[RMDB]
RNA sequence: GGGAACGACUCGAGUAGAGUCGAAAACCGGCUAGCUGCUUCUUCUUGUUCUCGAGGGCCUUCCUUCGUCGGUGAUCCUGCCUCUCCCUGUCGGUGAAUCCUCCCCUGAGAGGCCUCUUCCUAGGCCGAACACAAUUGUCUUCGGACAAUUGUGUUCAAAAGAAACAACAACAACAAC
Reactivity to DMS in 0.01 (KOAc 150mM, MgCl2 10mM, bicine 150mM(pH8.5), 24C), signal-to-noise 3, nucleotides 027 to 126: c020c000g020g030c040u010a100g020c050u020g000c030u000u000c060u010u000c030u000u010g000u000u000c030u000c030g000a110g010g000g010c070c050u000u010c010c020u000u010c090g030u000c060g000g000u000g010a090u000c030c010u000g010c030c030u000c040u000c020c030c030u000g010u000c040g010g010u000g000a090a120u000c010c000u000c010c010c020c010u000g010a150g010a140g020g010c020c020u000c080u000u000c040c020u000a110g010g010c050c060